Background: Source: RMDB library OK1LIB, as collected in RNAgym. An RNA of 177 nucleotides, treated with 2A3 and read out base by base. Values are in units of 0.01, from 0 to 300, in steps of 10. Values cover nucleotides 27 to 126. Conditions: 150 mM KOAc, 10 mM MgCl2 and 150 mM bicine (pH 8.5), 24 C.
RNA sequence: GGGAACGACUCGAGUAGAGUCGAAAACGCAUCAACAACUGGGAAACUCCUUGAUUGCGGCUUGUACAAUUUCAUAUAUUGAAUUUCAGCUCCAGCUACAAUUGGAACAUCCUCGGGAACCACAAUCCCCAUGCGACGUGUUCGCACGUCGCAUGGGAAAAGAAACAACAACAACAAC
Reactivity to 2A3 in 0.01 (KOAc 150mM, MgCl2 10mM, bicine 150mM(pH8.5), 24C), signal-to-noise 2, nucleotides 027 to 126: c010g050c000a100u130c000a090a130c000a020a050c110u160g030g120g020a090a050a000c050u000c000c040u050u030g030a030u040u050g020c000g000g000c000u100u050g080u080a020c060a140a090u000u000u050c080a040u230a030u130a130u180u180g020a000a020u090u010u250c020a040g010c000u000c030c000a000g000c020u070a060c020a040a080u000u100g050g000a000a050c080a060u000c000c010u030c000g010g000g020a000a040c010c000a010c000a000a020u010c000

Background:
For 2A3 the reverse transcriptase was SuperScript II with manganese.